Chemical mapping of a 177-nucleotide RNA with 2A3 and DMS. Values cover nucleotides 27 to 126. Conditions: 150 mM KOAc, 10 mM MgCl2 and 150 mM bicine (pH 8.5), 24 C. For 2A3 the reverse transcriptase was SuperScript II with manganese. The DMS profile rests on 2,921 reads.
[RMDB]
RNA sequence: GGGAACGACUCGAGUAGAGUCGAAAAGAUAUGGAUGUGGUGGGAGCAUUUCGGAAACGAAGUGUGCAUCGAUCACCACGCAUCCUAAGUCAAAACCGGCCCUUUCCGUUCGCGGAAAGGGCCGGAACAUUACUCGAAAGUUCGCUUUCGAGUAAUGAAAAGAAACAACAACAACAAC
Reactivity to 2A3 in 0.01 (KOAc 150mM, MgCl2 10mM, bicine 150mM(pH8.5), 24C), signal-to-noise 2, nucleotides 027 to 126: g020a010u050a040u130g010g000a020u000g020u070g100g210u020g020g020g040a080g010c000a000u030u000u010c010g010g040a050a080a060c010g000a010a020g000u020g020u040g040c020a180u220c130g190a140u090c040a090c110c010a010c000g010c000a000u000c010c000u040a170a010g050u030c010a000a000a110a230c010c000g000g090c010c010c000u010u010u000c070c020g020u070u110c300g000c020g180g000a020a000a020g010g010g060c050c000g000g000a010a000
Reactivity to DMS in 0.01 (KOAc 150mM, MgCl2 10mM, bicine 150mM(pH8.5), 24C), signal-to-noise 2, nucleotides 027 to 126: g010a020u000a300u010g000g010a010u000g020u000g030g050u000g010g000g010a200g000c000a000u000u000u000c010g000g010a090a090a200c000g010a010a000g010u000g020u000g020c140a160u010c180g010a130u010c070a090c000c010a020c010g000c050a010u000c000c000u000a040a120g010u000c040a080a040a140a140c000c000g000g000c000c000c010u000u000u000c000c030g020u000u040c210g030c050g000g000a000a010a010g010g010g000c000c020g000g000a000a030